[RMDB]
RNA sequence: GGGAACGACUCGAGUAGAGUCGAAAAAAUUUCUUGGAAACUAGCAGGUGGCCAACCGCCCGGGCCACCGUUACUCCACUCCACUCCUAAGGGACUGGUUUGGAGGAACAUAACAGGGCAAAUGAAAUACAGUACUGGUAUUCGUACCAGUACUGUAAAAAGAAACAACAACAACAAC
Reactivity to DMS in 0.01 (KOAc 150mM, MgCl2 10mM, bicine 150mM(pH8.5), 24C), signal-to-noise 2, nucleotides 027 to 126: a050a040u000u010u010c040u020u020g020g020a130a060a050c120u010a070g010c120a070g040g040u000g010g010c000c010a040a040c210c230g000c000c000c010g020g010g000c000c000a020c000c000g000u000u000a040c010u000c000c000a000c030u000c000c000a000c120u020c000c000u000a110a160g080g000g000a040c140u000g010g000u000u000u000g010g020a040g000g000a020a010c080a040u000a080a070c200a040g000g010g020c000a060a090a060u010g010a110a070a140
Background:
This 177-nucleotide RNA was probed chemically with DMS. For DMS the reverse transcriptase was MarathonRT.